[RMDB]
RNA sequence: GGGAACGACUCGAGUAGAGUCGAAAAGGGCCGCCGUUCGAGGUGCACGUCGCUGACCGGUACACGAUCCGCGUCGGCAGCGAGCAGGUGCACGAGGUCGAGCACUGGCUCACCGACCCGACGCCGUGGUGUGAGCACGUCAAGCUCGACGACGGCAAGGGAUCAGUUAAUUCGUUAACUGAUCCCUAAAAGAAACAACAACAACAAC
Reactivity to DMS in 0.01 (KOAc 150mM, MgCl2 10mM, bicine 150mM(pH8.5), 24C), signal-to-noise 1, nucleotides 027 to 156: g020g000g000c040c030g040c000c010g020u020u000c060g040a040g000g010u000g030c020a040c070g000u000c060g040c030u020g020a090c000c090g020g050u010a080c070a220c070g000a150u020c100c070g030c040g000u000c050g030g020c010a000g030c010g000a070g060c010a070g040g060u000g030c010a110c030g040a130g080g040u000c060g000a110g000c000a120c040u000g010g000c010u000c040a070c040c040g000a140c070c000c020g020a090c050g010c010c020g000u000g020g000u010g000u000g020a070g020c040a120c120g000u020c120a200a240g030c000u000c000g020a020c010g040a020c000g000g010c000a060
Reactivity to 2A3 in 0.01 (KOAc 150mM, MgCl2 10mM, bicine 150mM(pH8.5), 24C), signal-to-noise 5, nucleotides 027 to 156: g080g020g010c040c010g000c030c010g030u070u090c020g030a050g020g110u020g020c100a000c000g060u050c060g000c000u010g070a180c000c020g060g060u160a060c090a010c060g130a110u170c120c080g030c020g030u030c000g010g000c020a010g010c020g000a000g030c050a050g120g040u020g000c010a030c060g040a110g060g140u160c040g000a030g000c000a020c070u070g040g000c000u010c000a030c000c030g080a090c000c010c000g030a060c070g030c050c010g010u080g040g040u110g030u040g080a000g000c020a020c050g050u050c040a070a050g050c000u010c000g000a000c010g000a000c000g000g010c020a010